[RMDB]
RNA sequence: GGGAACGACUCGAGUAGAGUCGAAAAAGAAAAAGGCCAUUGGGCCCGAGAAUGCCCUAAAAAGAAAAAGCCAUGUCAUGAUCAAAAACUGUGGCAGCCAAAAACCACACCCGCCCUCUUCACUCAACCUAUAGAGCAUAUUCGUAUGCUCUAUAGGAAAAGAAACAACAACAACAAC
Reactivity to 2A3 in 0.01 (KOAc 150mM, MgCl2 10mM, bicine 150mM(pH8.5), 24C), signal-to-noise 6, nucleotides 027 to 126: a010g100a030a060a030a010a000g040g000c030c030a040u150u190g130g040g010c030c020c000g050a050g070a090a080u120g020c000c000c000u090a130a110a030a020a000g150a030a110a030a010a000g030c020c010a030u040g040u070c030a050u070g100a080u070c070a070a090a070a050a070c080u100g020u020g050g000c000a010g010c000c010a000a060a050a020a040c020c000a010c000a010c020c010c000g020c000c000c000u020c010u040u040c030a050c030u090c020a010a050
Reactivity to DMS in 0.01 (KOAc 150mM, MgCl2 10mM, bicine 150mM(pH8.5), 24C), signal-to-noise 3, nucleotides 027 to 126: a080g020a060a060a080a180a070g000g020c020c030a220u040u020g010g060g000c000c020c030g000a110g010a080a070u000g000c000c010c010u010a020a060a070a070a050g010a110a050a010a130a100g010c020c060a020u010g000u020c060a030u000g000a070u020c080a060a060a050a050a050c090u010g030u000g020g010c000a060g000c070c050a030a050a080a110a030c040c020a040c040a080c030c020c030g000c020c020c010u000c030u000u000c070a040c030u000c080a080a130
Structure probing data (2A3 and DMS) for a 177-nucleotide construct.
Values cover nucleotides 27 to 126.
The DMS profile rests on 4,072 reads.
Conditions: 150 mM KOAc, 10 mM MgCl2 and 150 mM bicine (pH 8.5), 24 C.
For 2A3 the reverse transcriptase was SuperScript II with manganese.